Source: RMDB library OK2TST, as collected in RNAgym. The record gives the reactivity of an RNA of 177 nucleotides to DMS and 2A3. Reactivities are given for positions 27 through 126. For DMS the reverse transcriptase was MarathonRT. The 2A3 profile rests on 19,288 reads. The reactions ran in a buffer of 150 mM KOAc, 10 mM MgCl2 and 150 mM bicine (pH 8.5), at 24 C.
RNA sequence: GGGAACGACUCGAGUAGAGUCGAAAAGCGGCAUUUCCUUUGCUCAAUCAGGUCUUAACGGCAUCUUUAUGCCUAACUGGUUACGUUGGGAAUUAAUCAACAGAGCUAAUAUUCAACUUCAAUUACACUGAUAAUAUAUGUUCGCAUAUAUUAUCAGAAAAGAAACAACAACAACAAC
Reactivity to DMS in 0.01 (KOAc 150mM, MgCl2 10mM, bicine 150mM(pH8.5), 24C), signal-to-noise 9, nucleotides 027 to 126: g020c050g010g000c080a090u010u000u000c020c010u000u010u010g020c050u000c060a080a030u000c020a020g010g010u010c170u010u010a090a110c280g010g000c010a010u000c240u010u000u010a030u000g000c000c000u000a060a070c030u000g010g000u000u000a070c180g010u000u000g000g010g000a070a090u010u010a080a100u000c050a030a040c060a200g010a050g000c030u010a050a070u010a090u000u010c110a070a070c100u000u000c080a050a090u010u010a100c140a170
Reactivity to 2A3 in 0.01 (KOAc 150mM, MgCl2 10mM, bicine 150mM(pH8.5), 24C), signal-to-noise 9, nucleotides 027 to 126: g050c060g060g000c050a050u020u020u030c000c000u050u080u090g010c010u020c030a020a030u010c010a020g010g100u060c070u160u130a090a040c090g000g000c010a010u000c080u040u280u200a030u030g000c000c000u010a060a040c010u010g030g000u030u040a030c050g010u020u020g040g010g040a110a200u140u100a120a060u150c010a000a030c010a030g030a010g020c020u030a070a050u080a120u180u110c060a070a050c040u110u070c080a050a140u170u100a060c080a010